[RMDB]
RNA sequence: GGGAACGACUCGAGUAGAGUCGAAAAUGCGGCUUCAAAAGGGGCUGUCCAAAAAGAGUCAGAUGAGUAUAUUCUGGCUAAAGGGCCGUUACAAGUAGGAGAUUCAGUUCUCUUGCAAGGCCAUUCUAUAACUAAAAGUUCGCUUUUAGUAAAAGAAACAACAACAACAAC
Reactivity to 2A3 in 0.01 (KOAc 150mM, MgCl2 10mM, bicine 150mM(pH8.5), 24C), signal-to-noise 3, nucleotides 027 to 129: u120g000c010g000g000c000u020u030c080a130a110a130a230g020g010g010g010c000u040g000u050c040c030a000a020a020a060a070g120a000g020u000c000a010g000a030u040g080a020g240u100a050u000a010u210u020c010u000g000g000c000u020a080a030a020g010g000g000c000c000g000u010u080a080c050a050a050g020u000a010g010g020a000g000a000u040u030c050a060g300u120u000c010u000c000u000u000g010c000a040a030g000g000c010c000a010u010u000c010u030a090u030a090
Reactivity to DMS in 0.01 (KOAc 150mM, MgCl2 10mM, bicine 150mM(pH8.5), 24C), signal-to-noise 7, nucleotides 027 to 129: u080g030c050g000g020c030u000u000c020a080a050a160a130g040g020g040g040c000u010g040u040c000c000a050a090a080a140a090g000a070g020u030c000a000g020a030u030g000a210g050u040a110u040a020u050u020c030u030g000g000c020u000a040a090a120g000g010g020c000c000g040u070u080a080c210a140a080g030u020a000g020g030a040g040a030u010u010c300a130g060u010u000c010u000c020u000u010g020c020a060a060g000g000c020c000a050u000u000c050u030a050u070a100